[RMDB]
About this RNA: Source: RMDB library M2PK90, as collected in RNAgym. An RNA of 177 nucleotides, treated with DMS and read out base by base.
RNA sequence: GGGAACGACUCGAGUAGAGUCGAAAAGAAGAUGAUGUGUAGGAUAGGUGGGAGGCUUUGAAGUGUGGACGCCAGUCUGCAUGGAGCCGACCUUGAAAUUCCACCCUUUAAUGAAAAACAAAUACAACAAGGCUACAUUGUUCGCAAUGUAGCCUUGAAAAGAAACAACAACAACAAC
Reactivity to DMS in 0.01 (KOAc 150mM, MgCl2 10mM, bicine 150mM(pH8.5), 24C), signal-to-noise 2, nucleotides 027 to 126: g000a100a060g000a110u010g030a050u010g040u000g080u020a110g020g040a100u020a060g000g040u000g020g030g030a300g020g010c030u000u040u000g000a100a100g010u030g010u010g000g030a010c010g000c300c180a170g010u000c000u000g020c030a010u000g020g030a020g010c020c010g000a110c030c010u000u000g010a050a030a080u000u010c010c010a070c000c020c070u010u000u000a080a070u000g010a030a030a050a160a060c140a160a070a110u000a080c130a100a150
The reactions ran in a buffer of 150 mM KOAc, 10 mM MgCl2 and 150 mM bicine (pH 8.5), at 24 C.